Chemical mapping of a 177-nucleotide RNA with DMS and 2A3. DMS adducts were read by reverse transcription with MarathonRT. Reactivities are given for positions 27 through 126. The RNA was probed in 150 mM KOAc, 10 mM MgCl2 and 150 mM bicine (pH 8.5) at 24 C. Source: RMDB library TTRDES, as collected in RNAgym.

RNA sequence: GGGAACGACUCGAGUAGAGUCGAAAAGAUAUGGACCACUGUGGCGGAGCUUUGAUCUAGCUCGGAAACGAGCUAGGGAGCUUACCAUUGGUCCUAAGUCAAAGAACUCACGUUCGCGUGAGUUCAACUGAUAUCCAGUCUUCGGACUGGAUAUCAGAAAAGAAACAACAACAACAAC
Reactivity to DMS in 0.01 (KOAc 150mM, MgCl2 10mM, bicine 150mM(pH8.5), 24C), signal-to-noise 2, nucleotides 027 to 126: g020a090u050a300u000g010g000a020c000c010a080c300u000g030u000g000g030c020g040g030a020g000c000u000u000u040g010a040u020c000u000a000g010c000u000c020g030g000a080a070a150c010g000a000g000c010u000a000g010g010g000a000g000c020u000u010a090c020c000a030u020u000g000g000u020c000c000u000a020a100g010u000c040a110a090a150g000a000a020c000u000c000a000c000g000u000u000c300g010c010g010u000g010a010g010u000u000c010a050a130
Reactivity to 2A3 in 0.01 (KOAc 150mM, MgCl2 10mM, bicine 150mM(pH8.5), 24C), signal-to-noise 2, nucleotides 027 to 126: g000a020u100a020u090g020g000a000c000c030a060c260u160g020u070g030g240c300g300g190a080g030c050u300u300u050g040a030u050c000u010a010g000c000u020c020g000g040a030a030a010c010g000a000g000c010u000a000g000g000g000a000g030c040u010u050a040c020c000a000u010u070g000g000u000c000c010u010a070a000g000u050c000a180a040a230g010a010a020c000u020c010a020c010g050u090u090c300g000c010g250u000g020a000g000u030u000c000a010a010